An RNA of 177 nucleotides, treated with DMS and 2A3 and read out base by base. It was measured as part of the RMDB library OK2TST. DMS adducts were read by reverse transcription with MarathonRT.
RNA sequence: GGGAACGACUCGAGUAGAGUCGAAAAUUCGCCGGCGGCCGUCCGGGAAUGAUCUCCGCCGCGACUGGCGCCAUGGCGCUGCUGAUGGUCAACCUGGUGAAGGACCACGGCCUGCAAUACCUGCUGACGUGGUAUGGUACUUCGGUACCAUACCACGAAAAGAAACAACAACAACAAC
Reactivity to DMS in 0.01 (KOAc 150mM, MgCl2 10mM, bicine 150mM(pH8.5), 24C), signal-to-noise 2, nucleotides 027 to 126: u010u000c030g030c010c010g010g030c030g030g030c010c060g010u010c010c030g000g000g000a090a090u000g000a140u010c060u010c010c070g020c050c090g030c160g020a050c040u020g060g000c030g000c010c030a080u000g010g020c000g000c150u000g020c020u000g000a080u000g000g000u000c040a080a170c050c040u000g020g000u010g000a120a100g010g010a030c020c040a050c050g000g010c020c120u010g000c070a030a050u000a180c080c050u030g000c030u000g010a210
Reactivity to 2A3 in 0.01 (KOAc 150mM, MgCl2 10mM, bicine 150mM(pH8.5), 24C), signal-to-noise 1, nucleotides 027 to 126: u060u020c000g020c030c010g010g000c000g050g240c000c020g000u020c000c010g040g000g070a020a070u160g080a070u030c020u020c100c020g120c020c020g040c080g050a060c070u120g000g050c020g000c020c010a130u190g010g000c020g010c020u010g010c000u030g010a300u090g000g040u020c040a040a030c020c030u070g060g080u130g070a110a080g070g010a010c000c000a000c020g020g000c000c000u020g000c000a020a140u050a180c000c050u000g020c030u010g040a050